Source: RMDB library OK3TST, as collected in RNAgym.
This 207-nucleotide RNA was probed chemically with 2A3 and DMS.

[RMDB]
RNA sequence: GGGAACGACUCGAGUAGAGUCGAAAAAGUUCUAGUCCUCACCUAAGAUCAGACUUACAUGGCCCUCAAAGUAAGAGCACUAGGUUGGGCUUUGUGGUGGGGAUUAGUGUCUCAUUUUUAGUCCCAAAUUAAAAACGAGAUUUUGGGCUGUACAUCACCGGAUAAAAUUAUUCGUAAUUUUAUCCGGAAAAGAAACAACAACAACAAC
Reactivity to 2A3 in 0.01 (KOAc 150mM, MgCl2 10mM, bicine 150mM(pH8.5), 24C), signal-to-noise 2, nucleotides 027 to 156: a000g050u110u000c000u000a000g000u030c000c000u000c000a000c000c010u070a110a050g030a150u110c110a050g170a290c050u100u070a010c030a030u040g010g000c000c000c000u020c040a140a150a030g010u090a110a000g080a050g230c050a020c050u050a020g010g180u080u070g030g000g000c000u000u020u050g050u030g000g000u000g000g000g010g000a000u000u000a000g000u000g040u010c000u020c030a070u130u140u070u080u300a010g050u140c010c000c010a010a020a010u070u060a050a110a080a020a010c090g050a090g020a140u040u020u000u000g000g000g000c000u030g080u120a050c050a070u090c020a030
Reactivity to DMS in 0.01 (KOAc 150mM, MgCl2 10mM, bicine 150mM(pH8.5), 24C), signal-to-noise 2, nucleotides 027 to 156: a130g010u000u000c000u010a030g020u000c010c010u010c020a050c010c010u000a060a050g010a070u000c040a120g000a050c000u000u010a070c110a140u000g010g000c010c010c000u000c040a080a180a210g020u000a040a070g000a050g040c020a060c090u010a060g000g010u010u000g020g010g000c020u020u000u010g040u000g020g020u000g020g020g040g000a010u000u000a020g010u010g020u000c020u000c020a040u020u000u000u000u000a070g000u000c040c070c080a040a050a150u010u000a030a010a010a020a020c050g010a050g020a150u000u010u010u000g000g010g040c100u000g020u000a060c070a170u000c050a220
For 2A3 the reverse transcriptase was SuperScript II with manganese. For DMS the reverse transcriptase was MarathonRT.